[RMDB]
RNA sequence: GGGAACGACUCGAGUAGAGUCGAAAAUUCUGCUUUGAGACUUCUUCUCCGUAGGACUCUUCGGCUCUUCGCGGGUACCCAGCAACCUGCUCCCACGCGGCGAUUGCAAAGGAUCCGGUUCGCUCUCCUUUUCUUUUUUACCUGCUUCAGACCGACGGUACGAUUCAAAGUUCGCUUUGAAUCGUACAAAAGAAACAACAACAACAAC
Reactivity to 2A3 in 0.01 (KOAc 150mM, MgCl2 10mM, bicine 150mM(pH8.5), 24C), signal-to-noise 3, nucleotides 027 to 156: u010u000c010u010g030c060u190u170u260g040a070g010a130c050u150u100c050u220u020c010u170c010c020g000u020a010g020g010a030c020u050c090u070u010c000g010g000c000u000c000u010u000c010g000c010g020g010g000u030a020c000c010c010a000g030c000a000a030c000c010u020g020c030u040c000c030c010a030c060g010c000g100g000c050g160a190u070u240g010c030a070a030a050g020g000a030u040c040c040g030g000u030u030c050g000c010u010c020u050c030c000u070u100u110u120c010u080u140u070u040u040u050a080c010c020u060g050c020u110u080c060a090g080a180c020c050g030a050c060g060